[RMDB]
RNA sequence: GGGAACGACUCGAGUAGAGUCGAAAAACAAAAUAUCAGUUUGAAAAGCUUCGCGACGUGUGGCGGUUGUUGAAAUCGAGCAAGUCAAAAUAUGUACACAUGUAGGUUUAUGUGAACGCCCCAGUGAAUCGUAGGUAUUUUUCGAAAUACCUACGAUAAAAGAAACAACAACAACAAC
Reactivity to 2A3 in 0.01 (KOAc 150mM, MgCl2 10mM, bicine 150mM(pH8.5), 24C), signal-to-noise 3, nucleotides 027 to 126: a000c030a030a050a010a020u260a060u130c030a030g080u050u110u120g100a090a070a010a020g020c030u070u070c050g030c040g050a040c030g050u050g020u050g100g100c010g000g010u010u010g020u020u070g080a030a030a010u060c010g000a000g010c020a030a040g010u020c020a010a000a000a120u230a060u130g050u080a030c020a000c010a030u060g050u100a070g120g100u090u160u050a030u050g040u010g010a030a010c030g050c020c000c000c010a010g030u040g110a040
Reactivity to DMS in 0.01 (KOAc 150mM, MgCl2 10mM, bicine 150mM(pH8.5), 24C), signal-to-noise 6, nucleotides 027 to 126: a080c060a060a050a100a080u010a090u010c080a070g010u010u000u000g010a070a080a090a120g010c050u000u000c070g010c120g010a040c090g020u000g010u010g010g020c040g020g000u000u000g010u000u000g010a070a030a050u000c050g020a300g000c040a040a040g010u000c050a050a080a080a070u010a050u010g020u000a070c040a040c040a020u010g010u010a070g010g000u010u010u010a020u000g010u000g000a050a040c080g000c030c010c010c040a140g020u010g000a080